[RMDB]
The data come from the RNA Mapping Database (RMDB), library TTRINS. The record gives the reactivity of an RNA of 177 nucleotides to DMS. Conditions: 150 mM KOAc, 10 mM MgCl2 and 150 mM bicine (pH 8.5), 24 C.
RNA sequence: GGGAACGACUCGAGUAGAGUCGAAAAGAUAUGGACCCGUGGACCUUUGAUGUGAAGGCUGACCACGAUGUCACUCGGAAACGAGUGCAUUAUCAAGCCCACAUCAAAGGUCCACGGGUCCUAAGUCCUAAUUGCAUUACUUCGGUAAUGCAAUUAGAAAAGAAACAACAACAACAAC
Reactivity to DMS in 0.01 (KOAc 150mM, MgCl2 10mM, bicine 150mM(pH8.5), 24C), signal-to-noise 2, nucleotides 027 to 126: g010a120u010a300u010g030g030a010c000c000c000g060u000g030g030a020c010c000u000u000u000g030a030u000g000u000g000a130a110g060g000c000u000g020a300c300c300a090c240g020a010u000g000u030c000a000c000u000c000g020g000a120a090a140c010g040a010g020u010g030c000a010u000u010a090u000c150a160a030g020c000c020c000a000c000a000u000c020a000a000a020g000g010u000c000c000a010c000g000g000g010u000c000c000u010a000a110g000u000c030